[RMDB]
RNA sequence: GGGAACGACUCGAGUAGAGUCGAAAAAAAAAAAGAUAUGGACAGAACUACACCUUGUACAGCAUCGAUCAAGAAUCGGAAACGAUUCUUGGGAGCUGUACGUGGUGCUGUCCUAAGUCAAAAAAAACAUUUAUUGUAGGUUCGCCUACAAUAAAUGAAAAGAAACAACAACAACAAC
Reactivity to DMS in 0.01 (KOAc 150mM, MgCl2 10mM, bicine 150mM(pH8.5), 24C), signal-to-noise 2, nucleotides 027 to 126: a020a000a020a090a110a160a080g010a040u000a300u000g000g010a020c010a000g000a100a060c100u000a300c000a000c000c010u000u000g000u000a020c000a000g000c020a240u010c160g000a070u010c000a000a000g020a020a010u000c010g000g010a120a120a070c000g000a020u000u000c000u000u000g000g000g010a010g000c000u000g000u000a000c020g000u010g010g000u000g000c010u000g000u000c010c010u010a030a080g000u000c020a030a000a000a090a070a070a090a300
Reactivity to 2A3 in 0.01 (KOAc 150mM, MgCl2 10mM, bicine 150mM(pH8.5), 24C), signal-to-noise 1, nucleotides 027 to 126: a000a030a030a000a030a190a000g080a110u130a080u150g000g000a000c000a000g000a120a010c130u280a050c300a050c000c000u100u200g020u000a000c000a020g000c030a180u300c090g140a130u070c070a010a020g000a000a000u000c000g000g050a090a070a020c020g000a020u010u010c010u000u030g010g020g000a010g000c000u020g000u000a010c010g000u000g000g000u020g020c000u000g000u000c000c000u010a140a020g010u030c070a010a060a070a050a000a000a050a100
Structure probing data (DMS and 2A3) for a 177-nucleotide construct. It was measured as part of the RMDB library TTRDES. DMS adducts were read by reverse transcription with MarathonRT. For 2A3, 2,602 sequencing reads were counted. The reactions ran in a buffer of 150 mM KOAc, 10 mM MgCl2 and 150 mM bicine (pH 8.5), at 24 C.